[RMDB]
RNA sequence: GGGAACGACUCGAGUAGAGUCGAAAAGGGGAAACUCACAAAAGUAAAUGCAUGUUUUCACAAACAAAAUAUGUCAUUGUUAACUGUUUUCCUAAGUGAGACAAUAUGCCCUCAUGCCCUGAAGCUACAUGGUAAGAAUGGCAGUGUGUAUGAGCGAAUUAUGCUGGGGAUUCGUCCCCAGCAUAAUAAAAGAAACAACAACAACAAC
Reactivity to 2A3 in 0.01 (KOAc 150mM, MgCl2 10mM, bicine 150mM(pH8.5), 24C), signal-to-noise 3, nucleotides 027 to 156: g000g010g000g010a040a080a030c000u010c010a050c020a000a140a040a000g110u120a040a070a020u040g000c020a020u060g000u020u010u020u050c220a150c100a100a170a000c060a010a040a120a020u050a040u040g100u130c040a030u020u050g040u110u050a110a000c020u010g080u060u050u050u100c030c030u070a130a010g020u010g020a010g020a010c000a030a110u080a070u250g030c000c000c000u060c000a020u070g010c010c000c000u080g070a020a000g000c020u040a020c060a070u100g030g000u110a080a040g080a140a080u040g020g030c000a020g040u050g000u020g020u080a060u080g020a000g020c060g070a000
Reactivity to DMS in 0.01 (KOAc 150mM, MgCl2 10mM, bicine 150mM(pH8.5), 24C), signal-to-noise 2, nucleotides 027 to 156: g030g000g040g010a060a040a090c020u000c040a070c040a100a110a130a150g020u000a040a060a030u000g010c020a030u000g050u000u000u000u000c010a300c150a260a110a210c100a030a040a010a020u000a030u000g000u000c020a040u000u000g000u000u000a050a100c050u010g000u010u000u000u000c030c020u000a110a210g010u010g010a070g000a100c040a010a030u000a050u000g020c030c000c010u000c010a070u000g040c000c060c010u020g000a050a070g000c030u000a030c060a110u010g010g010u010a050a130g030a080a100u010g020g000c040a070g020u000g020u000g020u000a060u000g000a090g020c050g010a120
Chemical mapping of a 207-nucleotide RNA with 2A3 and DMS. High DMS reactivity at an A or C suggests that its Watson-Crick edge is free. For DMS the reverse transcriptase was MarathonRT. For DMS, 3,258 sequencing reads were counted.